[RMDB]
Source: RMDB library OK2TRN, as collected in RNAgym.
Chemical mapping of a 177-nucleotide RNA with 2A3 and DMS.
RNA sequence: GGGAACGACUCGAGUAGAGUCGAAAACGAGGGCAAGCACGCCAAGUUCCGCUGCUACGUGAUGGGCAAGCCCGAGCCCGAGAUCGAAUGGCACUGGGAGGGCCGCCCGCUGCUCCCGGACCGCCGCAGGAGAUCUGUUAUUCGUAACAGAUCUCCUAAAAGAAACAACAACAACAAC
Reactivity to 2A3 in 0.01 (KOAc 150mM, MgCl2 10mM, bicine 150mM(pH8.5), 24C), signal-to-noise 2, nucleotides 027 to 126: c050g030a130g000g010g020c040a050a040g030c050a040c070g060c010c040a120a020g090u150u070c030c040g000c040u050g030c000u030a080c060g080u090g080a070u180g010g020g000c020a000a030g040c000c010c000g000a010g000c010c020c000g080a070g010a040u170c080g060a150a200u200g010g000c030a010c030u020g000g000g000a020g000g000g000c020c000g070c040c000c000g000c020u130g070c030u010c000c010c070g000g020a100c170c090g020c030c030g010c030
Reactivity to DMS in 0.01 (KOAc 150mM, MgCl2 10mM, bicine 150mM(pH8.5), 24C), signal-to-noise 4, nucleotides 027 to 126: c090g010a230g010g000g010c040a160a110g000c020a060c070g020c050c090a070a100g010u020u010c080c110g030c090u010g000c040u000a110c070g020u000g000a110u010g000g010g000c000a040a300g000c010c000c000g000a100g000c000c000c010g000a110g000a070u000c120g010a080a100u000g010g010c010a080c020u010g010g000g000a030g020g000g020c020c120g000c090c060c060g000c050u000g010c010u010c000c000c020g020g000a080c090c080g010c030c050g010c240

For DMS, 3,687 sequencing reads were counted. 2A3 adducts were read by reverse transcription with SuperScript II with manganese.